[RMDB]
This 177-nucleotide RNA was probed chemically with 2A3 and DMS. 2A3 adducts were read by reverse transcription with SuperScript II with manganese. Values cover nucleotides 27 to 126. The RNA was probed in 150 mM KOAc, 10 mM MgCl2 and 150 mM bicine (pH 8.5) at 24 C.
RNA sequence: GGGAACGACUCGAGUAGAGUCGAAAAGACACCCUUAGCAGAUGACCUCCUCGUUGGUGCGUGUCGGUAAUGUUGUCAGUCACAGGCAACAGUUAACGAUCUGCCUAAAUAAAAAGAGAAGAACAAAAUCCUGAUAUAUGUUCGCAUAUAUCAGGAUAAAAGAAACAACAACAACAAC
Reactivity to 2A3 in 0.01 (KOAc 150mM, MgCl2 10mM, bicine 150mM(pH8.5), 24C), signal-to-noise 9, nucleotides 027 to 126: g080a010c030a080c010c010c000u020u130a020g000c020a020g000a100u060g040a070c000c010u020c000c000u060c050g100u100u150g080g060u110g040c080g030u070g030u030c010g010g020u080a070a040u040g000u010u010g020u000c030a040g090u120c060a050c030a110g010g000c000a000a000c010a030g020u000u080a010a010c030g020a030u000c010u030g010c000c000u130a130a130a040u260a050a060a040a060a000g130a020g030a150a030g060a070a020c050a050a160a020
Reactivity to DMS in 0.01 (KOAc 150mM, MgCl2 10mM, bicine 150mM(pH8.5), 24C), signal-to-noise 6, nucleotides 027 to 126: g000a100c140a080c020c010c030u000u000a100g020c020a030g000a050u010g000a070c020c010u000c020c010u000c070g000u020u030g010g010u010g010c110g030u000g020u000c000g000g000u010a120a090u000g010u000u000g000u000c010a060g010u020c200a100c240a130g000g000c010a000a010c020a020g000u010u030a030a030c060g000a020u000c040u000g000c010c090u020a040a050a100u050a050a050a060a100a060g000a100g010a060a070g000a070a100c120a050a080a080